About this RNA:
An RNA of 177 nucleotides, treated with 2A3 and DMS and read out base by base. The DMS profile rests on 1,362 reads. For 2A3, 1,881 sequencing reads were counted. Reactivities are given for positions 27 through 126. For 2A3 the reverse transcriptase was SuperScript II with manganese. Source: RMDB library OK2TRN, as collected in RNAgym.

[RMDB]
RNA sequence: GGGAACGACUCGAGUAGAGUCGAAAACUGGCUCACUGCCAACUUGGAACGAGUUCUUGGAGCAAUGGUCGUUGCCGGAGAUGAUGUGGUAGUGGCGACAGACAAUGAAGAAUUCCACACGAGUUUGGCACAUUUGUAGGUUCGCCUACAAAUGUGCAAAAGAAACAACAACAACAAC
Reactivity to 2A3 in 0.01 (KOAc 150mM, MgCl2 10mM, bicine 150mM(pH8.5), 24C), signal-to-noise 3, nucleotides 027 to 126: c010u010g030g000c000u020c060a040c040u040g000c000c020a030a020c040u040u040g050g020a070a020c020g020a060g040u080u010c020u070u070g090g060a180g090c060a100a150u120g090g080u030c020g000u020u060g130c020c040g030g000a070g060a090u290g030a060u160g040u080g160g020u040a040g040u030g040g010c000g030a010c000a010g040a010c050a050a050u150g040a070a060g030a020a050u080u040c030c000a040c010a020c090g060a050g060u050u160u110g050
Reactivity to DMS in 0.01 (KOAc 150mM, MgCl2 10mM, bicine 150mM(pH8.5), 24C), signal-to-noise 2, nucleotides 027 to 126: c040u000g000g050c030u000c060a040c140u000g000c010c010a040a090c040u000u010g000g030a090a090c170g010a060g010u000u000c050u000u000g020g030a150g020c090a120a080u010g000g020u000c020g000u010u000g000c020c020g020g010a130g030a150u000g020a030u010g010u000g030g050u000a060g010u000g000g020c060g010a040c050a070g010a050c090a110a090u000g010a120a040g010a070a100u000u000c000c070a050c080a200c070g000a080g010u010u000u000g020